[RMDB]
RNA sequence: GGGAACGACUCGAGUAGAGUCGAAAAUAAUGGUACUCAAAAGCUGAUCGAAAUUGACGAUGACCGUCGUCUUCGCGUGUUUAUGGAGAAGAGAAUGGGACAGGAGGUCCCAGGUGACUCUGUAGGACCUGAGUUUGCUGGUUAUGUCUUCAAGAUAACCUGAUAAAUUAUUCGUAAUUUAUCAGGUAAAAGAAACAACAACAACAAC
Reactivity to DMS in 0.01 (KOAc 150mM, MgCl2 10mM, bicine 150mM(pH8.5), 24C), signal-to-noise 4, nucleotides 027 to 156: u000a080a110u010g010g020u010a090c030u020c050a060a080a090a130g010c030u010g010a110u000c030g010a080a130a140u010u010g020a040c020g020a110u000g010a140c150c090g020u000c040g020u000c000u000u000c030g020c050g010u000g030u000u000u000a090u020g010g010a090g020a060a100g010a090g010a090a100u000g010g010g010a060c040a100g010g020a170g030g020u000c020c000c010a040g000g010u000g010a100c080u000c010u000g020u010a120g020g010a060c030c020u010g000a090g010u000u000u000g010c010u010g010g010u000u000a140u000g010u000c040u000u000c030a030a090g000a170u000a120
Reactivity to 2A3 in 0.01 (KOAc 150mM, MgCl2 10mM, bicine 150mM(pH8.5), 24C), signal-to-noise 4, nucleotides 027 to 156: u190a010a080u070g030g020u040a050c030u020c070a020a090a020a040g030c090u090g070a150u120c050g070a050a070a120u120u110g020a010c010g010a010u050g090a080c050c080g040u030c020g050u000c000u070u050c050g020c020g010u070g020u030u090u040a110u100g040g010a030g020a090a050g050a010g050a120a060u070g010g000g020a010c030a050g070g160a060g110g050u000c020c000c000a000g000g020u040g030a030c010u030c000u120g060u050a040g000g030a010c000c030u020g010a020g030u040u090u130g040c020u010g030g040u070u040a060u080g060u020c030u120u060c050a040a050g070a110u230a070
An RNA of 207 nucleotides, treated with DMS and 2A3 and read out base by base. For DMS the reverse transcriptase was MarathonRT. The RNA was probed in 150 mM KOAc, 10 mM MgCl2 and 150 mM bicine (pH 8.5) at 24 C. The 2A3 profile rests on 2,704 reads.